[RMDB]
Source information:
The record gives the reactivity of an RNA of 177 nucleotides to 2A3 and DMS. The reactions ran in a buffer of 150 mM KOAc, 10 mM MgCl2 and 150 mM bicine (pH 8.5), at 24 C. The data come from the RNA Mapping Database (RMDB), library TTRDEL. Reactivities are rounded to 0.1 and cut off at 0 and 3.
RNA sequence: GGGAACGACUCGAGUAGAGUCGAAAAGAUAUGGACCUGUGCAGCGCGCCGAGGGCAUCGGAAACGAUGCCUAUCGAACUACGCUGACACAGGUCCUAAGUCAAACUAGCUUCUUCGGAAGCUAGAAGAAUGAUUGUCAGUUCGCUGACAAUCAUUCAAAAGAAACAACAACAACAAC
Reactivity to 2A3 in 0.01 (KOAc 150mM, MgCl2 10mM, bicine 150mM(pH8.5), 24C), signal-to-noise 2, nucleotides 027 to 126: g030a010u040a020u090g000g000a000c000c000u000g010u000g050c010a000g000c010g050c050g070c180c030g010a010g000g000g000c010a000u000c010g020g030a050a030a000c020g000a000u010g000c020c000u020a200u020c000g000a010a010c030u180a070c100g010c000u020g150a030c000a000c000a000g000g000u000c000c000u000a000a000g010u000c020a000a010a000c000u000a000g030c000u010u000c000u050u040c300g150g000a000a000g000c010u000a000g000a010a020
Reactivity to DMS in 0.01 (KOAc 150mM, MgCl2 10mM, bicine 150mM(pH8.5), 24C), signal-to-noise 4, nucleotides 027 to 126: g010a040u000a300u020g000g010a000c010c000u010g030u010g000c000a000g000c020g010c300g020c190c010g000a100g010g000g000c010a000u000c000g020g000a100a080a150c000g020a010u000g020c000c000u000a000u010c010g000a080a150c080u020a090c000g010c000u000g000a150c000a000c000a010g000g000u000c000c000u000a010a090g000u000c010a070a090a250c010u000a000g000c000u000u000c000u000u010c140g010g010a020a000g020c000u000a000g010a100a060